[RMDB]
RNA sequence: GGGAACGACUCGAGUAGAGUCGAAAAUGGUAUGUGACCUUCCAGGCUGUUGCCCAAAGGCUGUUGAGUAGGGACUUUCUAAUGGGUGGGGCUGGAGAAAAAUUGAAAAUACCUAAUAGAGAUGGAGGUAGCUUUAGUUUUUCGAAACUAAAGCUACAAAAGAAACAACAACAACAAC
Reactivity to DMS in 0.01 (KOAc 150mM, MgCl2 10mM, bicine 150mM(pH8.5), 24C), signal-to-noise 3, nucleotides 027 to 126: u000g010g010u010a010u010g000u000g030a120c040c040u010u010c020c030a140g000g020c030u010g010u010u010g000c000c000c010a020a170a230g000g020c220u010g010u000u000g010a190g010u010a100g000g000g000a080c040u000u000u010c020u010a070a240u000g000g010g040u000g000g020g000g000c040u000g000g020a100g010a010a030a060a070a060u020u020g000a130a060a060a070u000a030c020c010u010a090a070u010a120g010a130g010a110u000g000g010a100g000
Reactivity to 2A3 in 0.01 (KOAc 150mM, MgCl2 10mM, bicine 150mM(pH8.5), 24C), signal-to-noise 2, nucleotides 027 to 126: u060g000g010u040a040u080g150u090g120a090c010c000u030u000c010c010a040g090g050c030u060g080u300u100g010c000c000c000a030a000a010g010g000c000u030g020u090u040g040a080g060u060a080g050g040g000a010c010u030u060u020c040u070a140a090u030g000g000g000u050g000g030g000g060c000u010g000g030a010g000a020a080a020a020a020u090u120g020a030a110a050a000u030a030c000c000u050a150a050u110a150g150a020g010a040u160g100g050a050g130